The record gives the reactivity of an RNA of 177 nucleotides to DMS and 2A3. Source: RMDB library OK2TST, as collected in RNAgym. For DMS, 6,753 sequencing reads were counted. Conditions: 150 mM KOAc, 10 mM MgCl2 and 150 mM bicine (pH 8.5), 24 C. 2A3 adducts were read by reverse transcription with SuperScript II with manganese.

RNA sequence: GGGAACGACUCGAGUAGAGUCGAAAAGGAGCUACAAACCGUGUUGAUAUUUUAGAUGCUGCAUUAUUACGUCCAGGACGUUUUGAUCGUCAGAUUACAGUUGGAUUACCAGAUCGAUUAGGACGACCUUUCACGAUAAGUUCGCUUAUCGUGAAAGAAAAGAAACAACAACAACAAC
Reactivity to DMS in 0.01 (KOAc 150mM, MgCl2 10mM, bicine 150mM(pH8.5), 24C), signal-to-noise 5, nucleotides 027 to 126: g010g020a070g030c050u000a070c110a060a060a110c070c040g010u010g020u000u000g010a080u000a070u000u000u010u000a080g010a080u010g010c040u000g020c050a050u000u000a080u000u010a080c100g010u000c030c100a140g010g000a080c040g000u000u000u000u000g000a030u000c020g000u000c050a070g010a070u000u000a070c120a100g020u000u000g020g000a150u000u000a080c060c030a100g010a040u000c040g020a080u000u000a080g010g020a030c020g000a080c150
Reactivity to 2A3 in 0.01 (KOAc 150mM, MgCl2 10mM, bicine 150mM(pH8.5), 24C), signal-to-noise 2, nucleotides 027 to 126: g020g010a050g010c010u070a070c100a060a120a020c020c040g070u050g070u070u050g010a100u040a140u090u140u140u100a100g030a060u060g020c040u030g000c020a060u000u080a040u100u100a130c030g010u000c010c030a010g070g000a020c010g000u000u030u130u150g040a060u120c030g000u030c040a020g020a100u050u120a130c020a060g060u080u030g100g030a050u030u020a130c040c030a010g000a050u030c050g030a040u000u100a040g020g010a010c000g030a000c000